[RMDB]
RNA sequence: GGGAACGACUCGAGUAGAGUCGAAAAUGGGUGAUUGUUUGCUUGGAAUGAUUACUUCAUUUAUAGGUCAAGGUAUGGAUAUAUUGGAAGCUACAGUUAGUGGAGCAUAUAUACAUGGCUAUAUAGGACUAGCCAUAUCCUUCGGGAUAUGGCUAGUAAAAGAAACAACAACAACAAC
Reactivity to DMS in 0.01 (KOAc 150mM, MgCl2 10mM, bicine 150mM(pH8.5), 24C), signal-to-noise 2, nucleotides 027 to 126: u000g000g010g010u010g000a000u000u020g010u000u000u010g040c110u020u020g000g010a030a030u020g010a010u010u010a040c070u000u000c000a030u000u010u000a100u000a100g000g010u020c130a090a100g010g010u020a000u000g000g000a020u000a010u000a010u000u000g000g030a240a180g000c010u000a030c130a160g000u030u030a050g010u000g000g000a260g000c130a030u000a000u000a050u000a040c000a010u000g000g000c040u000a030u000a130u040a110g010g000
Reactivity to 2A3 in 0.01 (KOAc 150mM, MgCl2 10mM, bicine 150mM(pH8.5), 24C), signal-to-noise 1, nucleotides 027 to 126: u040g000g000g000u020g010a040u010u020g070u140u030u010g210c260u100u060g120g060a000a010u020g020a000u010u010a050c000u080u250c020a010u000u100u040a130u060a070g080g000u080c120a080a160g100g010u040a040u090g070g100a040u030a010u010a000u050u090g100g000a100a000g020c000u030a020c060a240g090u200u200a000g020u110g020g010a060g000c000a000u010a000u000a000u010a050c040a010u070g040g000c040u040a080u010a010u030a190g110g000
Record summary:
An RNA of 177 nucleotides, treated with DMS and 2A3 and read out base by base. It was measured as part of the RMDB library OK1LIB. 2A3 adducts were read by reverse transcription with SuperScript II with manganese. Reactivities are rounded to 0.1 and cut off at 0 and 3. DMS adducts were read by reverse transcription with MarathonRT.